Structure probing data (2A3) for a 207-nucleotide construct. The reactions ran in a buffer of 150 mM KOAc, 10 mM MgCl2 and 150 mM bicine (pH 8.5), at 24 C. It was measured as part of the RMDB library RNAMAK.

RNA sequence: GGGAACGACUCGAGUAGAGUCGAAAAAAAAACGCUGGGAUGUUUGAGGGAUGUGACAAGCAUCGAUCGACCUGAAGCGCGCACGGGUCGGGAGCUUGUUUAUCAUCCCUAAACAUCCUGUGCUGAAGCGCGCACGGCAACCGAAAGGUGCGAAAAAUCUGUAGUAGGAGUUCGCUCCUACUACAGAAAAAGAAACAACAACAACAAC
Reactivity to 2A3 in 0.01 (KOAc 150mM, MgCl2 10mM, bicine 150mM(pH8.5), 24C), signal-to-noise 1, nucleotides 027 to 156: a000a000a000a000a000c000g000c010u010g020g010g000a020u020g010u050u060u130g160a030g000g010g010a010u030g010u030g000a010c000a000a000g000c010a060u300c100g020a050u000c010g000a000c000c000u010g060a190a110g000c000g000c020g000c000a010c000g010g010g000u000c020g000g000g000a020g000c000u030u020g030u030u060u010a060u160c000a000u020c000c000c000u000a000a000a000c000a000u000c000c000u000g000u000g010c000u000g000a050a010g000c010g000c000g000c020a020c000g000g000c010a010a000c000c000g000a070a030a010g010g000u010g000c010g090a100a030a020a100a030